Structure probing data (DMS and 2A3) for a 177-nucleotide construct.
2A3 is a SHAPE reagent: it acylates the 2'-hydroxyl of flexible nucleotides of all four kinds.
The data come from the RNA Mapping Database (RMDB), library OK2TST.
RNA sequence: GGGAACGACUCGAGUAGAGUCGAAAAACGAGGGUUGCGCUCGUUGCGGGACUUAACCCAACACCUUACGGCACGAGCUGACGACAGCCAUGCACCACCUGUGUCCGCGUUCCCGAAGGCACCCCUCGCGUCUGUUAAGUUUCGACUUAACAGACGCAAAAGAAACAACAACAACAAC
Reactivity to DMS in 0.01 (KOAc 150mM, MgCl2 10mM, bicine 150mM(pH8.5), 24C), signal-to-noise 2, nucleotides 027 to 126: a140c110g020a080g000g000g040u010u000g020c110g000c040u010c040g010u020u010g030c060g000g010g000a050c100u010u030a090a100c020c000c020a040a100c070a140c050c040u000u010a090c110g010g060c040a030c040g000a050g010c030u020g020a130c050g020a110c110a030g000c040c060a040u010g000c050a080c050c030a040c060c020u000g000u000g020u010c010c050g000c050g010u000u000c010c020c000g020a080a080g000g010c110a070c040c000c010c010u000c080
Reactivity to 2A3 in 0.01 (KOAc 150mM, MgCl2 10mM, bicine 150mM(pH8.5), 24C), signal-to-noise 1, nucleotides 027 to 126: a000c060g000a060g060g000g030u110u150g010c130g030c030u030c060g040u020u130g000c070g070g020g060a080c040u070u100a060a060c000c000c030a070a020c040a040c000c040u090u220a050c060g050g000c040a000c060g020a010g000c060u110g030a040c060g060a040c040a000g000c000c000a040u140g020c030a050c000c020a020c000c040u070g000u010g020u110c020c020g060c060g050u030u010c000c000c000g040a030a030g020g030c010a010c000c000c000c000u010c050